Source information
Source: RMDB library OK2TRN, as collected in RNAgym. Chemical mapping of a 177-nucleotide RNA with 2A3 and DMS. The 2A3 profile rests on 5,345 reads. 2A3 adducts were read by reverse transcription with SuperScript II with manganese. The DMS profile rests on 12,249 reads. For DMS the reverse transcriptase was MarathonRT. The RNA was probed in 150 mM KOAc, 10 mM MgCl2 and 150 mM bicine (pH 8.5) at 24 C.

RNA sequence: GGGAACGACUCGAGUAGAGUCGAAAAAGAAGAGUGGGGCUGGUUUCAAACAUUAGUUAUGCCCGAAAAGUAGACCUAUGUGUUUGUCUGUAGGGUCUACCUGACAUUAACACUAAAGGAAAUACCAUAUUCUACCGUAUUUCGAUACGGUAGAAUAAAAAGAAACAACAACAACAAC
Reactivity to 2A3 in 0.01 (KOAc 150mM, MgCl2 10mM, bicine 150mM(pH8.5), 24C), signal-to-noise 4, nucleotides 027 to 126: a000g050a030a000g050a010g040u050g020g030g030g020c020u030g010g060u040u050u020c080a090a120a040c020a080u050u090a030g040u050u070a030u100g000c000c010c030g020a040a060a000a010g000u000a010g010a020c010c010u040a080u110g170u010g030u040u180u190g130u050c050u050g090u050a050g040g000g060u020c000u020a030c000c020u010g000a000c010a060u100u120a050a000c030a000c040u050a070a060a030g040g010a030a120a040u070a040c010c010a030
Reactivity to DMS in 0.01 (KOAc 150mM, MgCl2 10mM, bicine 150mM(pH8.5), 24C), signal-to-noise 8, nucleotides 027 to 126: a080g010a110a090g010a100g030u000g010g000g010g020c080u000g000g010u000u010u010c070a080a090a140c100a080u010u000a060g010u010u000a070u000g000c010c010c120g010a050a060a080a120g010u000a020g000a080c020c000u000a090u000g020u000g010u000u000u010g020u010c060u000g010u000a050g010g000g010u000c030u000a020c010c050u000g000a060c050a030u000u010a060a080c100a040c020u000a020a070a060g000g000a050a050a070u000a040c020c030a120